RNA sequence: GGGAACGACUCGAGUAGAGUCGAAAAGCCUGGCGUAUGGAUGAAGAGGAUUUUAUCCGAAUCCUUACGCGCCAGGUUGUCUGCGGAAAUCUGCCAGAGUAAUCUUAGAUAUGGACGAGUUGGUAGGCCCUAGGCCAACAUUCGUGUUGGCCUAGGGAAAAGAAACAACAACAACAAC
Reactivity to DMS in 0.01 (KOAc 150mM, MgCl2 10mM, bicine 150mM(pH8.5), 24C), signal-to-noise 4, nucleotides 027 to 126: g010c010c010u000g000g010c000g030u000a070u010g010g030a050u000g000a190a120g020a210g000g000a040u010u050u020u040a040u010c030c030g000a290a060u000c000c000u000u040a080c140g000c010g020c020c000a010g000g020u000u000g000u000c030u000g000c070g010g000a030a110a060u010c000u000g000c020c010a030g020a100g000u020a160a130u010c030u010u030a100g000a120u040a090u010g000g000a060c070g010a220g000u010u010g010g000u000a060g030g010
Reactivity to 2A3 in 0.01 (KOAc 150mM, MgCl2 10mM, bicine 150mM(pH8.5), 24C), signal-to-noise 3, nucleotides 027 to 126: g020c000c000u000g010g000c000g000u100a150u170g030g090a070u050g040a120a130g040a050g100g020a040u050u090u120u290a060u120c000c000g000a000a000u000c000c000u020u030a090c060g000c000g000c000c000a000g000g000u030u040g000u000c010u020g170c030g050g100a010a040a040u000c010u000g030c030c000a010g020a020g120u120a050a030u030c030u030u070a090g100a160u170a080u300g050g000a000c000g000a000g090u060u010g020g000u010a060g000g010